[RMDB]
RNA sequence: GGGAACGACUCGAGUAGAGUCGAAAAACAUUGGCGCUCCAGCAAACUUGCGUGUUGUUGGUCAUGCCAUGCAAGGCACUCUUUUGAAGUUGACUGUCGAUGUUGCUAACCCUAGCACUCCAGCCUAGCAGUUAUAUUGGUUCGCCAAUAUAACUGCAAAAGAAACAACAACAACAAC
Reactivity to 2A3 in 0.01 (KOAc 150mM, MgCl2 10mM, bicine 150mM(pH8.5), 24C), signal-to-noise 2, nucleotides 027 to 126: a000c030a040u030u040g010g010c020g020c020u000c010c020a020g040c040a080a000a020c080u170u250g050c010g080u220g020u040u040g030u000u030g010g040u050c050a020u140g000c000c000a010u040g030c060a040a050g040g010c060a030c040u020c040u000u090u020u290g130a160a070g000u110u060g050a100c020u010g030u200c060g010a080u060g020u130u050g000c010u020a090a100c000c040c000u000a030g000c010a000c010u000c020c020a030g000c000c000u000a010
Reactivity to DMS in 0.01 (KOAc 150mM, MgCl2 10mM, bicine 150mM(pH8.5), 24C), signal-to-noise 2, nucleotides 027 to 126: a060c050a030u000u000g030g010c010g010c070u000c030c000a030g010c020a040a040a070c050u010u000g000c210g010u000g020u010u000g000u010u000g000g010u000c150a080u030g010c040c000a020u000g010c120a080a100g000g010c050a060c060u000c020u000u000u000u000g010a040a080g010u000u000g000a180c050u000g020u010c080g000a060u000g020u010u000g020c070u020a090a130c110c070c130u000a030g020c010a040c040u000c010c010a020g010c020c050u010a100
Conditions: 150 mM KOAc, 10 mM MgCl2 and 150 mM bicine (pH 8.5), 24 C. Chemical mapping of a 177-nucleotide RNA with 2A3 and DMS. The 2A3 profile rests on 1,224 reads. It was measured as part of the RMDB library 15KREP.